[RMDB]
RNA sequence: GGGAACGACUCGAGUAGAGUCGAAAAGCCCCAUUCGUGGGGCCGUCUCUGAAGAGGAUACAGGGUCUGAAGUGACAAUGACAUCUACUCUGCUGUUCUCUCCACAGUAGUUCCGACUUCGGUCGGAGUAAGAGUUAUGAUUCGUCAUAACUCUUACAAAAGAAACAACAACAACAAC
Reactivity to 2A3 in 0.01 (KOAc 150mM, MgCl2 10mM, bicine 150mM(pH8.5), 24C), signal-to-noise 9, nucleotides 027 to 126: g010c010c010c000c000a010u050u070c140g140u030g000g000g010g000c010c020g010u000c010u000c000u020g080a070a030g020a020g080g020a040u130a200c110a100g140g050g170u030c050u050g030a060a020g040u020g050a030c050a070a110u180g030a020c010a190u000c000u010a000c000u010c010u010g010c030u020g010u010u000c010u000c000u020c020c030a140c020a090g140u220a020g030u120u030c000c000g000a010c000u040u070c250g080g000u000c000g000g010a000
Reactivity to DMS in 0.01 (KOAc 150mM, MgCl2 10mM, bicine 150mM(pH8.5), 24C), signal-to-noise 8, nucleotides 027 to 126: g000c000c000c000c000a050u000u010c140g020u000g010g010g010g020c010c030g010u000c010u000c010u010g010a180a040g000a050g010g010a120u010a070c220a090g000g010g010u000c050u000g000a200a040g010u000g000a060c110a120a120u010g000a040c020a090u000c000u000a020c000u000c000u000g010c080u000g010u010u000c010u000c010u000c050c060a060c140a110g010u000a090g010u010u000c010c000g010a020c000u000u010c160g030g020u000c010g000g000a040